An RNA of 177 nucleotides, treated with DMS and 2A3 and read out base by base. The reactions ran in a buffer of 150 mM KOAc, 10 mM MgCl2 and 150 mM bicine (pH 8.5), at 24 C.
RNA sequence: GGGAACGACUCGAGUAGAGUCGAAAAGGCGGGGCAGGCGCCUCCGGGGGUCCGCCGGUGAGUGUGGCGCGAGGGGGGGUCCGACGAACGCAGGCGCUGUCUCCCCGGGGCCCGCGUAACCCCGCGCAACAGUCAUUGCUUUCGAGCAAUGACUGUUAAAAGAAACAACAACAACAAC
Reactivity to DMS in 0.01 (KOAc 150mM, MgCl2 10mM, bicine 150mM(pH8.5), 24C), signal-to-noise 2, nucleotides 027 to 126: g000g030c000g000g000g000g000c220a040g000g010c020g050c300c070u010c020c010g040g000g010g050g000u000c000c030g000c000c000g000g040u040g000a180g000u000g000u010g040g010c120g050c100g020a060g020g010g000g000g010g000g010u000c020c060g000a010c070g000a120a020c050g000c020a080g000g000c000g020c170u050g040u030c050u000c000c000c030c000g000g000g000g000c150c160c090g080c010g000u010a170a300c000c000c000c020g030c030g030c090
Reactivity to 2A3 in 0.01 (KOAc 150mM, MgCl2 10mM, bicine 150mM(pH8.5), 24C), signal-to-noise 3, nucleotides 027 to 126: g160g000c030g010g010g000g040c080a090g100g040c050g020c020c000u050c000c000g000g020g010g000g000u010c010c000g010c010c000g000g000u040g030a140g020u090g020u170g090g000c040g020c080g110a160g000g000g000g000g010g010g030u080c030c020g030a040c030g020a110a020c040g010c110a080g000g000c010g030c070u130g030u030c140u140c030c000c000c000g000g010g000g000c010c000c000g020c010g000u040a050a050c010c000c020c000g000c000g000c000